[RMDB]
Source: RMDB library OK2TRN, as collected in RNAgym.
This 177-nucleotide RNA was probed chemically with 2A3 and DMS.
RNA sequence: GGGAACGACUCGAGUAGAGUCGAAAAAGGUCGCCACGAAUGUUGGGUCCCAAGAGCCAGGAACCCUUGCCUGAAGAAGGCUAAAUACUCUUGAUGCUGGUUCCUAGCAUUAAGCUGUCUCCUUCCAUACCUCAUAGGAUUUCGAUCCUAUGAGGUAAAAAGAAACAACAACAACAAC
Reactivity to 2A3 in 0.01 (KOAc 150mM, MgCl2 10mM, bicine 150mM(pH8.5), 24C), signal-to-noise 4, nucleotides 027 to 126: a020g050g020u060c050g050c050c030a040c080g080a110a090u100g020u070u050g060g010g010u050c000c000c000a080a040g090a010g040c020c030a020g030g030a060a090c020c000c010u030u060g010c000c000u040g020a070a050g170a040a000g050g000c000u010a000a010a030u120a070c030u020c010u040u030g010a020u100g040c020u030g050g000u100u040c010c030u040a010g000c000a010u010u050a050a030g020c060u010g030u040c020u030c030c020u070u040c020c010a040
Reactivity to DMS in 0.01 (KOAc 150mM, MgCl2 10mM, bicine 150mM(pH8.5), 24C), signal-to-noise 8, nucleotides 027 to 126: a030g010g000u000c090g020c020c020a050c100g010a070a050u000g010u000u010g010g010g000u000c040c010c020a090a090g000a110g020c050c020a040g000g010a050a100c020c020c030u010u000g010c010c010u000g000a120a100g000a170a010g000g010c010u000a020a030a040u010a100c130u010c010u010u000g000a060u010g010c100u000g010g000u000u000c050c020u000a050g000c010a030u000u000a030a050g000c130u010g000u000c040u000c010c040u000u000c020c040a220
2A3 adducts were read by reverse transcription with SuperScript II with manganese. For DMS, 15,456 sequencing reads were counted.